RNA sequence: GGGAACGACUCGAGUAGAGUCGAAAAUCAAAAGAUUGUUUGAUGAUAGGUUUUCAUUGAAUAUCUGAUAUUUUGAAUGGAGCAUGCGGUAUGAUUGGUUGACAUAUAGCUGUAAUAUCGACAGCCCACCUCUUACAUUUUUCGAAAUGUAAGAGGUAAAAGAAACAACAACAACAAC
Reactivity to 2A3 in 0.01 (KOAc 150mM, MgCl2 10mM, bicine 150mM(pH8.5), 24C), signal-to-noise 9, nucleotides 027 to 126: u060c010a030a020a020a020g020a030u090u150g020u040u010u010g010a010u000g010a010u030a110g300g130u180u180u060u040c010a010u010u020g010a020a000u010a010u000c020u040g050a050u040a150u190u110u070u090g110a090a070u080g010g010a070g020c060a080u050g010c020g020g000u020a020u050g060a090u070u110g020g050u030u070g050a020c070a080u160a020u090a110g000c010u010g010u030a050a030u020a030u060c020g050a050c020a010g000c010c000c000
Reactivity to DMS in 0.01 (KOAc 150mM, MgCl2 10mM, bicine 150mM(pH8.5), 24C), signal-to-noise 9, nucleotides 027 to 126: u000c080a060a100a180a040g000a030u000u010g030u000u000u000g010a010u000g000a020u000a130g020g010u010u010u000u000c010a010u000u000g000a010a010u000a020u000c020u000g000a260u010a070u000u000u000u000g010a070a090u000g010g010a190g010c030a050u000g020c060g010g010u000a020u000g000a110u010u000g010g010u010u000g010a090c130a060u010a060u000a090g010c010u000g010u000a070a080u000a050u000c050g010a090c070a070g000c010c030c040